[RMDB]
RNA sequence: GGGAACGACUCGAGUAGAGUCGAAAAUCUCAAAGCUUCGGCUUUGAGACAGUAAGGGAAACCGAUUAUUCCGGACGACUCCGGAGAAACAAAGUCAAAUAAGAACGUUAGGCUUCGGCCUAACGAACUUAUACGUAGAGUUCGCUCUACGUAUAAGAAAAGAAACAACAACAACAAC
Reactivity to DMS in 0.01 (KOAc 150mM, MgCl2 10mM, bicine 150mM(pH8.5), 24C), signal-to-noise 5, nucleotides 027 to 126: u000c000u010c000a000a010a010g030c000u000u020c230g040g020c000u000u000u000g000a010g000a010c110a070g010u010a080a120g010g010g010a100a120a210c020c030g000a150u010u010a140u010u000c000c010g010g000a100c070g010a070c060u000c000c000g000g010a020g010a080a030a140c090a020a030a030g000u000c020a090a150a090u010a050a100g000a090a160c010g010u000u000a000g000g000c000u000u010c190g030g000c000c000u000a000a000c000g000a020a070
Reactivity to 2A3 in 0.01 (KOAc 150mM, MgCl2 10mM, bicine 150mM(pH8.5), 24C), signal-to-noise 6, nucleotides 027 to 126: u000c000u000c000a000a000a000g010c010u070u190c270g120g000c000u020u000u000g000a000g000a000c000a010g110u120a080a160g040g020g040a060a060a040c020c010g000a020u060u060a240u250u030c010c000g000g030a070c100g040a030c070u000c100c000g020g010a030g080a020a030a000c030a030a030a010g040u060c030a020a070a130u190a120a060g070a140a030c010g000u000u000a000g000g010c000u020u060c260g070g000c000c000u000a000a000c000g000a000a000
About this RNA: Chemical mapping of a 177-nucleotide RNA with DMS and 2A3. For DMS, 6,246 sequencing reads were counted. For DMS the reverse transcriptase was MarathonRT. Values are in units of 0.01, from 0 to 300, in steps of 10.